[RMDB]
RNA sequence: GGGAACGACUCGAGUAGAGUCGAAAAGGCCCGGACUACUUUUUCCAGACGAGCCGGCAGGGCUUGCAGACGGUGAACCUGAGCCAGGCUUUCAAGAAUCUGCGCGGGCUGUGGGGCGUGCAGGCGCCACAUGCCUGACCUUCGGGUCAGGCAUGUGAAAAGAAACAACAACAACAAC
Reactivity to DMS in 0.01 (KOAc 150mM, MgCl2 10mM, bicine 150mM(pH8.5), 24C), signal-to-noise 1, nucleotides 027 to 126: g000g020c040c010c000g030g000a110c080u000a090c080u030u010u010u000u010c030c020a110g030a160c120g000a050g010c000c040g000g010c080a300g010g000g010c030u010u000g010c110a170g040a120c100g030g050u000g000a060a040c050c060u010g000a120g020c030c020a080g040g010c080u000u000u010c060a100a110g010a130a070u000c050u000g020c000g010c080g010g010g010c000u000g000u000g020g010g010g000c030g020u000g000c160a070g020g000c100g030c080